[RMDB]
RNA sequence: GGGAACGACUCGAGUAGAGUCGAAAAGAUAUGGACAUCGGGCAGAACUACUCGAGAAUUCGGAAACGAAUUCUACCGAGCUGUCUCUAGCGUGUGUCCUAAGUCAAAAUCUACCUUCGGGUAGAAAGUGUGUUUAUUCGUUCGCGAAUAAACACACAAAAGAAACAACAACAACAAC
Reactivity to 2A3 in 0.01 (KOAc 150mM, MgCl2 10mM, bicine 150mM(pH8.5), 24C), signal-to-noise 1, nucleotides 027 to 126: g020a000u080a000u060g010g000a050c050a060u180c270g120g000g000c010a010g000a080a030c110u180a030c010u300c000g000a010g010a000a000u010u000c000g000g000a010a020a010c010g010a050a010u010u030c000u100a160c230c130g000a000g000c030u010g000u030c030u090c070u210a130g110c220g260u300g050u040g000u040c000c010u050a050a020g000u010c030a000a000a140a300u070c000u000a010c020c010u060u160c290g180g020g000u010a020g090a030a020a020
Reactivity to DMS in 0.01 (KOAc 150mM, MgCl2 10mM, bicine 150mM(pH8.5), 24C), signal-to-noise 1, nucleotides 027 to 126: g010a140u020a300u000g020g000a060c020a010u010c170g030g010g020c000a020g000a100a030c010u000a300c000u010c020g040a110g000a020a000u000u000c010g000g000a100a020a250c000g050a020a000u000u000c000u000a080c300c010g020a010g000c040u000g010u000c020u010c050u010a120g000c120g000u030g000u000g050u000c010c000u000a020a100g000u020c090a050a070a160a150u020c000u000a000c000c000u000u020c270g000g020g070u000a000g000a080a000a160